[RMDB]
Source: RMDB library 15KLIB, as collected in RNAgym. This 170-nucleotide RNA was probed chemically with DMS and 2A3. DMS adducts were read by reverse transcription with MarathonRT. Values are in units of 0.01, from 0 to 300, in steps of 10. Conditions: 150 mM KOAc, 10 mM MgCl2 and 150 mM bicine (pH 8.5), 24 C.

RNA sequence: GGGAACGACUCGAGUAGAGUCGAAAAAUGUUCUUGGAACAGACUCAGCAUUCCCUUAACUUUGUGGGAGAGUUCGUUGUCAACGAUGUUGUCCUCGCAAUUCUCUCUGGAACCACAACUAAUGUUGCGCCGAACCCGUUCGCGGGUUCGAAAAGAAACAACAACAACAAC
Reactivity to DMS in 0.01 (KOAc 150mM, MgCl2 10mM, bicine 150mM(pH8.5), 24C), signal-to-noise 4, nucleotides 027 to 129: a080u030g030u010u000c000u030u050g070g050a100a000c070a130g000a110c090u020c060a100g000c200a220u020u010c070c000c060u030u050a120a100c090u060u020u010g070u050g000g010g010a070g000a020g080u030u000c030g030u000u020g010u000c040a000a070c020g050a120u100g000u020u000g020u040c050c060u050c010g000c200a050a040u000u050c000u030c010u040c050u030g000g000a130a240c090c080a090c030a090a020c180u030a130a090u040g020u000u000g040c140g000c180
Reactivity to 2A3 in 0.01 (KOAc 150mM, MgCl2 10mM, bicine 150mM(pH8.5), 24C), signal-to-noise 3, nucleotides 027 to 129: a000u060g060u010u000c040u030u110g010g020a030a000c250a050g060a030c020u020c060a000g040c020a050u000u000c000c000c000u010u110a100a040c050u050u110u250g160u060g000g000g060a000g000a000g000u000u000c010g000u000u050g090u080c020a020a010c100g160a140u240g020u080u000g030u000c020c010u000c000g230c050a030a100u020u000c000u000c010u010c050u040g080g080a120a020c010c010a050c030a070a060c060u090a080a000u130g000u010u000g010c040g010c020